The record gives the reactivity of an RNA of 207 nucleotides to 2A3. For 2A3, 756 sequencing reads were counted. Conditions: 150 mM KOAc, 10 mM MgCl2 and 150 mM bicine (pH 8.5), 24 C.

RNA sequence: GGGAACGACUCGAGUAGAGUCGAAAAACGAGUCCGUAAGCGGACUCGAAGGGCCCCAGAAGACCAAGGGGCCCAAACCUACCACUCAUUAGAUGCAUGGAAAUCACUAGGUGAUACGUCACCUAGAACACGCUUUUAAGCUUCGGCUUAAAAGCAAGUAUCUAGGCAUGUUCGCAUGCCUAGAUACAAAAGAAACAACAACAACAAC
Reactivity to 2A3 in 0.01 (KOAc 150mM, MgCl2 10mM, bicine 150mM(pH8.5), 24C), signal-to-noise 2, nucleotides 027 to 156: a000c000g000a000g000u000c000c000g060u110a130a030g160c010g010g000a000c000u000c000g000a000a000g000g040g000c000c040c000c000a090g090a300a000g090a170c050c130a110a100g000g010g000g000c000c000c040a000a020a000c000c000u020a020c030c030a070c020u130c010a130u090u220a050g020a060u030g110c030a020u060g130g120a120a060a030u200c040a030c010u020a000g040g000u000g000a020u010a050c200g060u010c000a000c000c000u000a000g000a010a010c060a000c040g000c010u030u000u000u000a000a000g000c010u000u120c200g040g000c000u050u000a010a000a000a000g000c010a000a000
It was measured as part of the RMDB library M2RFPK.